[RMDB]
RNA sequence: GGGAACGACUCGAGUAGAGUCGAAAAGCCAUAGCCGGGCUCGCUCAGCGCCUGCUGGUAGACCCGGUCCCAGGGGAAGCGCAGGAUCAGCUGGCACUCGAUCUGCGCGCGCUCGCAGGCGGCGCGACUGCAUGACUAGGUUCGCCUAGUCAUGCAGAAAAGAAACAACAACAACAAC
Reactivity to DMS in 0.01 (KOAc 150mM, MgCl2 10mM, bicine 150mM(pH8.5), 24C), signal-to-noise 2, nucleotides 027 to 126: g030c040c040a080u000a170g020c070c040g020g010g000c090u000c080g000c020u000c080a090g030c050g010c070c030u000g020c010u000g000g020u000a050g010a220c020c000c000g000g000u040c010c010c000a300g010g010g010g010a170a150g030c040g040c020a060g040g010a040u010c040a070g000c030u000g020g020c070a100c040u000c090g000a040u010c040u010g000c030g010c000g020c090g010c020u000c200g010c010a060g000g040c040g000g000c020g040c000g010a180
Reactivity to 2A3 in 0.01 (KOAc 150mM, MgCl2 10mM, bicine 150mM(pH8.5), 24C), signal-to-noise 1, nucleotides 027 to 126: g000c030c010a080u130a030g070c050c030g040g020g000c050u010c060g010c000u140c060a060g010c030g040c060c050u060g000c020u040g040g020u040a060g130a160c000c000c010g000g010u050c000c020c000a050g000g010g020g020a070a020g060c000g000c020a000g180g000a090u030c020a050g000c020u060g040g000c000a030c050u040c050g020a050u020c010u100g000c020g000c000g000c010g010c010u060c030g040c020a030g040g000c020g000g000c040g000c020g030a050